[RMDB]
RNA sequence: GGGAACGACUCGAGUAGAGUCGAAAAAUGCAACGUUCGCGUUGCAUGUUCAUCCUAAGUCGCAAUGAUAUUGAGUUCGAUAAGUGUCGGAAACGACACUUUUGACGAACAAUGAUGUAUUGACGAUAUGGAAGGUGGAUGAGCUUCGGCUCAUCAAUCCGUAGGUCUCAUUCGUGAGACCUACGGAAAAAGAAACAACAACAACAAC
Reactivity to 2A3 in 0.01 (KOAc 150mM, MgCl2 10mM, bicine 150mM(pH8.5), 24C), signal-to-noise 2, nucleotides 027 to 156: a000u000g000c000a030a000c010g020u000u030c210g030c020g110u070u000g040c000a000u000g000u090u300c080a110u000c000c000u050a130a020g020u000c000g020c020a000a000u160g120a040u100a050u160u100g080a060g060u000u010c020g030a040u010a090a010g000u000g010u000c000g010g120a150a090a050c010g000a000c000a020c000u000u000u000u030g070a040c030g000a010a000c000a030a100u300g010a000u000g050u060a020u000u040g180a300c000g030a000u010a040u120g050g060a050a150g160g110u230g120g000a000u010g000a000g010c000u000u070c270g160g010c000u010c000a000u000c000a000a100
Reactivity to DMS in 0.01 (KOAc 150mM, MgCl2 10mM, bicine 150mM(pH8.5), 24C), signal-to-noise 2, nucleotides 027 to 156: a030u000g000c000a020a010c000g030u000u000c210g020c070g040u000u010g020c000a000u000g020u000u000c030a240u000c050c000u000a070a290g020u000c010g020c050a030a110u020g000a060u000a000u020u000g010a300g020u000u010c000g000a210u000a020a000g010u000g020u020c000g020g020a190a150a300c020g030a010c000a000c000u000u000u000u000g000a280c120g030a040a070c030a130a140u010g000a050u000g020u000a010u000u000g010a170c000g020a080u010a300u020g000g020a090a060g030g000u000g000g010a040u000g010a040g020c020u000u000c300g070g000c000u010c000a000u000c000a020a050